[RMDB]
RNA sequence: GGGAACGACUCGAGUAGAGUCGAAAAAAUCUGGACGAACUGAUGAGGUACUCGGCUGAGGAUGCCCACUACACCUUAGAGUUGGGGCUCGAGCUGGCGCAGGUCGAGUUGGAGCUCUCCUACCUGACCGUCUACUAAUAUUCGUAUUAGUAGACGGAAAAGAAACAACAACAACAAC
Reactivity to DMS in 0.01 (KOAc 150mM, MgCl2 10mM, bicine 150mM(pH8.5), 24C), signal-to-noise 9, nucleotides 027 to 126: a070a040u010c030u000g010g010a090c060g010a070a050c050u000g010a110u010g010a120g010g010u000a090c100u000c060g010g000c040u000g010a100g000g000a090u000g000c020c010c030a090c130u000a090c110a060c070c060u000u000a080g000a080g000u000u010g020g000g000g010c020u000c030g010a050g010c030u000g000g010c070g010c150a100g010g010u000c040g010a040g010u000u000g000g010a070g010c040u000c020u000c070c030u000a100c080c040u000g000a250
Reactivity to 2A3 in 0.01 (KOAc 150mM, MgCl2 10mM, bicine 150mM(pH8.5), 24C), signal-to-noise 6, nucleotides 027 to 126: a000a020u050c050u060g030g030a010c030g020a090a050c030u070g020a070u090g020a120g060g020u060a060c040u030c060g050g000c040u080g090a060g110g040a080u120g020c010c020c000a020c010u070a030c030a060c010c040u090u120a040g020a020g130u100u090g020g000g010g010c010u020c030g040a020g000c020u030g070g010c070g010c090a040g000g100u040c030g060a000g030u020u030g080g000a010g000c000u010c010u020c030c010u040a080c010c010u040g050a060